[RMDB]
RNA sequence: GGGAACGACUCGAGUAGAGUCGAAAACUGGGGUAUGGUGACAUGGUGCCGAAGACAAUAGCUGGCAAGAUUUUUGGUUCAAUAUGCUCCUUGAGUGGAGUCUUAGUGAUUGCUCUGCCAGUUCCUGCUUUAAAGCGGUGUUCGCACCGCUUUAAAGAAAAGAAACAACAACAACAAC
Reactivity to 2A3 in 0.01 (KOAc 150mM, MgCl2 10mM, bicine 150mM(pH8.5), 24C), signal-to-noise 1, nucleotides 027 to 126: c010u040g030g000g000g000u040a020u100g010g030u040g010a030c060a070u040g030g020u020g040c000c000g030a020a020g030a020c040a040a250u060a070g000c000u000g020g040c010a020a160g030a150u030u170u070u130u240g150g010u110u010c030a060a000u040a070u080g020c050u020c010c110u030u070g210a270g220u090g120g030a030g040u060c040u060u040a030g010u030g120a090u060u050g030c020u030c040u040g040c040c010a010g000u040u000c000c020u030g050
Reactivity to DMS in 0.01 (KOAc 150mM, MgCl2 10mM, bicine 150mM(pH8.5), 24C), signal-to-noise 1, nucleotides 027 to 126: c030u020g010g020g000g020u010a050u010g000g000u000g000a070c090a130u000g000g010u000g000c030c020g000a070a060g010a090c080a070a090u010a070g040c030u000g000g010c020a070a110g000a100u000u040u000u000u000g030g010u020u000c030a050a070u000a070u000g000c020u000c000c010u000u020g000a190g060u000g000g000a010g000u010c090u000u000a060g000u000g010a040u010u010g020c100u000c060u010g010c010c010a080g000u000u000c060c010u000g000

Chemical mapping of a 177-nucleotide RNA with 2A3 and DMS. Values cover nucleotides 27 to 126. Source: RMDB library RFMREP, as collected in RNAgym. DMS adducts were read by reverse transcription with MarathonRT.